[RMDB]
RNA sequence: GGGAACGACUCGAGUAGAGUCGAAAAUCAGGCAACUUCGGUUGCCUGAAAAUAAACUCGCCUAUAGCCAGGCGAGUACCAAAGCGGCUAAUGCAAUGGAAAAAACUGCCUCGUUCGCGAGGCAGAAGCUACAAUUAAGGUUCGCCUUAAUUGUAGCAAAAGAAACAACAACAACAAC
Reactivity to DMS in 0.01 (KOAc 150mM, MgCl2 10mM, bicine 150mM(pH8.5), 24C), signal-to-noise 4, nucleotides 027 to 126: u010c000a010g020g000c000a000a010c000u000u020c190g020g010u000u000g000c000c000u010g000a000a020a060a110u000a070a100a110c000u000c000g030c000c000u000a110u000a140g000c220c170a060g000g010c000g000a000g020u010a040c040c010a020a060a280g000c030g000g010c130u010a070a080u030g000c030a030a270u000g000g010a010a060a040a060a090a130c000u000g000c010c000u000c000g000u000u000c180g030c000g010a020g010g000c010a000g010a020a050
Reactivity to 2A3 in 0.01 (KOAc 150mM, MgCl2 10mM, bicine 150mM(pH8.5), 24C), signal-to-noise 6, nucleotides 027 to 126: u010c000a010g000g010c000a010a010c020u040u100c220g120g000u010u000g010c000c000u000g000a000a000a010a000u080a010a050a010c000u000c000g000c000c010u110a110u120a110g110c060c030a000g010g000c000g000a000g010u010a010c000c010a030a010a000g070c040g090g030c120u220a050a040u180g040c030a010a090u070g050g000a090a080a010a000a010a070c000u000g000c000c000u020c000g010u040u060c220g010c020g090a000g000g000c010a000g000a000a010
The record gives the reactivity of an RNA of 177 nucleotides to DMS and 2A3. The DMS profile rests on 4,395 reads. DMS adducts were read by reverse transcription with MarathonRT. Conditions: 150 mM KOAc, 10 mM MgCl2 and 150 mM bicine (pH 8.5), 24 C. For 2A3 the reverse transcriptase was SuperScript II with manganese. High 2A3 reactivity points to a flexible backbone, as in loops and unpaired stretches.